[RMDB]
RNA sequence: GGGAACGACUCGAGUAGAGUCGAAAAAGGAGUUCGGUUCUUUUGAGAAGUUCAAGGAUCACUUCUCUGCUGCGGCUCUUGGUCUGCAGGGUUCCGGCUGGGCUGUUCUCGGCUACGAUCACAUCGAUCACUGAUACGAGUUCGCUCGUAUCAGUGAAAAAGAAACAACAACAACAAC
Reactivity to 2A3 in 0.01 (KOAc 150mM, MgCl2 10mM, bicine 150mM(pH8.5), 24C), signal-to-noise 1, nucleotides 027 to 126: a000g150g010a060g030u170u190c030g000g020u010u060c050u010u150u110u120g000a010g020a060a020g010u070u080c100a080a130g100g030a160u170c030a050c010u050u000c000u000c040u050g000c060u020g010c010g050g000c000u060c070u150u160g050g000u050c020u050g000c020a000g050g020g000u030u070c050c040g010g010c000u020g020g090g000c050u020g030u100u000c040u000c000g020g000c000u110a040c050g000a030u060c060a010c010a260u120c060g050a040
Reactivity to DMS in 0.01 (KOAc 150mM, MgCl2 10mM, bicine 150mM(pH8.5), 24C), signal-to-noise 2, nucleotides 027 to 126: a070g000g000a070g010u010u000c060g020g020u000u000c020u000u010u000u000g000a000g000a080a090g000u000u000c090a080a100g000g010a090u000c080a060c010u000u000c010u000c010u000g000c030u000g010c090g020g020c000u020c110u010u000g020g010u000c010u030g000c030a070g010g010g020u020u000c020c040g000g020c010u000g020g000g010c040u010g000u010u000c020u000c040g020g000c060u000a090c110g000a040u000c070a070c150a300u020c140g010a170